[RMDB]
RNA sequence: GGGAACGACUCGAGUAGAGUCGAAAAGAAAGAAAGAAUGGCCGGCAUGGUCCCAGCCUCCUCGUCGGCGCCGGCCGGGCAACAUUCCGAGGGGACCGUCCCUCGGUAAUGGAGAAUGGGACCCAAAAAAAGACUGGUCUCUUCGGAGACCAGUCAACAUGAUGAUAGAGUUCGCUCUAUCAUCAUGAAAAGAAACAACAACAACAAC
Reactivity to 2A3 in 0.01 (KOAc 150mM, MgCl2 10mM, bicine 150mM(pH8.5), 24C), signal-to-noise 2, nucleotides 027 to 156: g060a010a090a010g040a070a120a010g040a070a130u040g000g000c000c000g010g000c030a050u090g010g000u000c000c020c040a000g000c000c000u020c010c030u130c070g160u060c080g050g000c030g000c000c000g000g000c000c000g000g040g010c050a060a020c010a010u010u040c000c010g010a010g010g010g000g020a120c030c020g130u240c000c010c010u000c000g010g000u010a010a000u040g010g010a030g040a020a010u020g000g000g000a010c020c000c000a080a070a030a010a000a010a000g000a000c000u000g020g010u010c000u040c010u030u090c240g030g000a000g010a000c000c000a000g000u000c000a000a000